About this RNA
Structure probing data (DMS and 2A3) for a 207-nucleotide construct. It was measured as part of the RMDB library OK3TST.
RNA sequence: GGGAACGACUCGAGUAGAGUCGAAAACGUAUGAGUGUGGGGACUAGAACUGAUGCCUUUGCCACAACAUGUGCUCCUGCCUUGGUGCUCUGCUGAGUGCAAGCAAAAGUGGGAUCCAUGAGGGGAAAUGUUUAACAGCAGUUUGAGGUGGAGGAGGACACUAUUAACACUUCGGUGUUAAUAGUGUAAAAGAAACAACAACAACAAC
Reactivity to DMS in 0.01 (KOAc 150mM, MgCl2 10mM, bicine 150mM(pH8.5), 24C), signal-to-noise 2, nucleotides 027 to 156: c060g030u000a080u010g010a100g000u000g030u000g010g000g010g010a080c070u000a070g020a030a070c040u000g010a100u000g000c020c060u000u000u020g030c040c040a100c040a080a110c050a040u010g010u000g000c020u000c020c030u000g010c040c040u000u000g020g020u010g050c030u000c040u000g050c030u000g010a090g020u000g030c030a030a080g010c050a040a040a030a030g030u000g010g020g010a060u010c040c020a030u000g000a180g010g000g000g000a060a050a030u000g000u000u000u010a070a130c050a060g000c040a060g050u010u000u000g000a070g020g020u000g010g080a110g010g010a140g020g000
Reactivity to 2A3 in 0.01 (KOAc 150mM, MgCl2 10mM, bicine 150mM(pH8.5), 24C), signal-to-noise 7, nucleotides 027 to 156: c050g070u140a070u140g060a040g040u080g010u100g020g020g010g040a010c050u060a060g040a100a050c030u050g030a070u100g020c010c020u050u050u090g080c040c020a100c020a160a050c020a060u080g060u120g040c020u030c010c010u020g050c010c020u050u060g130g020u080g040c020u060c070u130g090c030u080g070a060g090u160g030c010a040a030g010c010a050a060a020a030g040u040g000g000g010a010u000c020c010a030u050g030a050g000g010g000g020a030a040a040u080g040u070u130u130a100a040c030a020g040c010a020g000u030u120u140g040a040g000g030u050g010g000a040g020g000a020g030g010